The data come from the RNA Mapping Database (RMDB), library M2RFPK. This 207-nucleotide RNA was probed chemically with 2A3 and DMS. Reactivities are rounded to 0.1 and cut off at 0 and 3. The DMS profile rests on 3,809 reads. The RNA was probed in 150 mM KOAc, 10 mM MgCl2 and 150 mM bicine (pH 8.5) at 24 C. For 2A3 the reverse transcriptase was SuperScript II with manganese. The 2A3 profile rests on 5,645 reads. High 2A3 reactivity points to a flexible backbone, as in loops and unpaired stretches.
[RMDB]
RNA sequence: GGGAACGACUCGAGUAGAGUCGAAAAGGCGUAGCCGACAACAUGCCCAGGUAGCCCAGACCUUCAAGGCUACGGUGCGUUGCGACGCACGGUCUGAUUCUUCACAAAGACGUUCACCGCGUCUUCUACAACCGGCAAAGAUUCGUCUUUGCCGGAAGCUACCAAAUUAGUUCGCUAAUUUGGUAGCAAAAGAAACAACAACAACAAC
Reactivity to 2A3 in 0.01 (KOAc 150mM, MgCl2 10mM, bicine 150mM(pH8.5), 24C), signal-to-noise 6, nucleotides 027 to 156: g060g000c110g100u110a040g030c010c010g060a030c030a080a030c010a110u170g040c000c000c010a020g040g000u020a000g000c000c040c080a020g000a010c000c010u020u030c030a010a000g000g000c000u010a000c000g000g000u010g000c010g000u010u100g050c170g120a010c000g000c000a000c020g010g000u000c000u000g020a060u180u080c060u130u130c080a050c060a160a060a000g000a000c000g080u170u090c180a060c090c030g000c010g020u000c020u030u020c020u080a090c020a110a090c000c000g010g000c010a000a000a000g010a010u050u130c150g040u000c100u000u000u010g000c000c000g000g000a000a000
Reactivity to DMS in 0.01 (KOAc 150mM, MgCl2 10mM, bicine 150mM(pH8.5), 24C), signal-to-noise 2, nucleotides 027 to 156: g000g020c050g000u010a090g030c010c030g000a260c030a070a060c030a100u000g020c030c010c100a070g050g000u000a040g000c040c010c120a180g010a150c070c010u000u000c080a110a300g000g000c010u000a020c000g020g010u010g000c020g010u000u000g020c100g050a200c030g000c020a050c000g000g010u000c020u000g000a280u000u000c040u000u000c080a150c150a030a020a000g010a030c010g030u020u010c090a090c130c140g000c000g000u000c000u000u000c010u000a080c050a110a150c000c000g000g020c000a050a040a020g000a100u000u010c300g000u000c010u000u000u000g000c000c010g030g010a000a010